[RMDB]
RNA sequence: GGGAACGACUCGAGUAGAGUCGAAAACGCAUGCGAGAGCAUGCGGCUAAGCUUCGGCUUAGUAAGAGAAACUUAGGAUUUUAGGCUCCCCGGCGUGUCUCGAACCAUGCCGGGCCAAACCCAUAGGGCUGGCGGUCCCUGUGCGGUGAAAAUUCAACCAUGAGUGAUCGUUCGCGAUCACUCAUGGAAAAGAAACAACAACAACAAC
Reactivity to 2A3 in 0.01 (KOAc 150mM, MgCl2 10mM, bicine 150mM(pH8.5), 24C), signal-to-noise 1, nucleotides 027 to 156: c020g000c010a000u010g000c000g020a060g000a010g060c000a010u020g000c000g000g020c000u000a000a000g010c000u010u140c220g150g010c010u010u010a000g000u030a050a000g020a020g000a070a110a020c100u030u020a060g030g070a070u060u030u000u060a050g040g020c010u030c010c020c000c000g000g000c010g050u020g000u020c090u060c230g100a020a000c020c000a000u000g000c000c010g000g010g000c000c000a040a000a010c010c000c000a000u020a000g000g000g000c020u020g100g030c050g040g000u100c020c010c000u010g000u020g030c160g060g000u020g030a000a050a010a020u060u020c020a050a050
The record gives the reactivity of an RNA of 207 nucleotides to 2A3. Conditions: 150 mM KOAc, 10 mM MgCl2 and 150 mM bicine (pH 8.5), 24 C. 2A3 adducts were read by reverse transcription with SuperScript II with manganese. Source: RMDB library OK3TST, as collected in RNAgym. For 2A3, 1,006 sequencing reads were counted. Values cover nucleotides 27 to 156.